[RMDB]
RNA sequence: GGGAACGACUCGAGUAGAGUCGAAAAUACUGCAAGGAAUGGAGGGCGCAUUCACAGUCGGCCUGGGUGACGGCACCGCAAGAGUUCUUGCGAACCAACCGAUCUCGUUGACUACUAAGGGAACUGACCAGCAUAGUGAGUUCGCUCACUAUGCUGGAAAAGAAACAACAACAACAAC
Reactivity to 2A3 in 0.01 (KOAc 150mM, MgCl2 10mM, bicine 150mM(pH8.5), 24C), signal-to-noise 2, nucleotides 027 to 126: u090a040c000u050g040c090a110a020g110g050a080a040u140g010g090a070g040g070g000c000g010c050a090u070u040c080a040c000a030g060u070c000g010g020c000c070u140g050g050g000u030g010a060c050g010g030c040a100c040c010g010c010a000a020g020a070g110u130u090c000u050u060g010c000g000a000a030c010c000a060a080c000c000g020a070u010c010u030c080g060u050u030g040a120c040u050a030c000u120a110a080g060g020g000a080a060c030u030g010a050
Reactivity to DMS in 0.01 (KOAc 150mM, MgCl2 10mM, bicine 150mM(pH8.5), 24C), signal-to-noise 2, nucleotides 027 to 126: u090a060c080u040g000c040a070a030g000g000a090a050u040g020g110a130g010g000g060c000g000c050a100u000u000c030a100c180a010g000u010c060g010g000c090c010u000g000g000g010u000g000a070c130g010g040c070a030c170c010g010c020a020a000g020a270g000u010u010c020u000u000g010c030g010a030a070c140c030a100a140c020c010g010a020u020c030u000c130g030u000u000g000a010c070u000a080c080u040a160a110g000g000g010a090a050c030u000g000a300
Chemical mapping of a 177-nucleotide RNA with 2A3 and DMS. Source: RMDB library OK1LIB, as collected in RNAgym. The 2A3 profile rests on 1,009 reads. DMS adducts were read by reverse transcription with MarathonRT. The DMS profile rests on 1,602 reads.